[RMDB]
RNA sequence: GGGAACGACUCGAGUAGAGUCGAAAAGAUAUGGAGCGUGACAUGCUCUAUAGUCGGAAACGACUAGAGAGCAACAGCACGCCUCCUAAGUCAAACAGUAAGAAGAAGUUCGCUUCUUCUUACUGAAGCUAGGUAUACUGUUCGCAGUAUACCUAGCAAAAGAAACAACAACAACAAC
Reactivity to DMS in 0.01 (KOAc 150mM, MgCl2 10mM, bicine 150mM(pH8.5), 24C), signal-to-noise 6, nucleotides 027 to 126: g010a030u000a300u000g010g010a030g010c000g000u000g000a050c070a260u000g010c000u000c000u000a030u000a010g010u000c000g010g000a140a100a160c000g000a010c000u000a000g000a010g000a020g000c010a020a070c300a180g000c000a000c000g020c120c040u000c000c000u010a050a150g000u010c030a120a100a300c010a010g000u000a010a000g000a010a000g000a010a000g000u000u000c290g010c000u000u000c000u000u000c000u000u000a000c000u000g000a040a060
Reactivity to 2A3 in 0.01 (KOAc 150mM, MgCl2 10mM, bicine 150mM(pH8.5), 24C), signal-to-noise 4, nucleotides 027 to 126: g030a020u070a030u140g000g000a000g010c020g000u010g090a210c040a130u070g000c010u000c000u010a030u000a020g010u000c000g000g000a050a090a020c020g010a000c000u010a010g000a000g000a000g040c010a040a080c030a060g010c000a000c020g040c030c000u010c000c000u010a050a010g070u040c040a050a070a090c000a040g010u010a000a000g000a000a000g000a010a000g010u070u210c250g070c170u010u000c010u010u000c000u000u000a000c000u000g000a010a000
Conditions: 150 mM KOAc, 10 mM MgCl2 and 150 mM bicine (pH 8.5), 24 C. An RNA of 177 nucleotides, treated with DMS and 2A3 and read out base by base. It was measured as part of the RMDB library TTRDEL. DMS (dimethyl sulfate) methylates the pairing face of unpaired adenines and cytosines.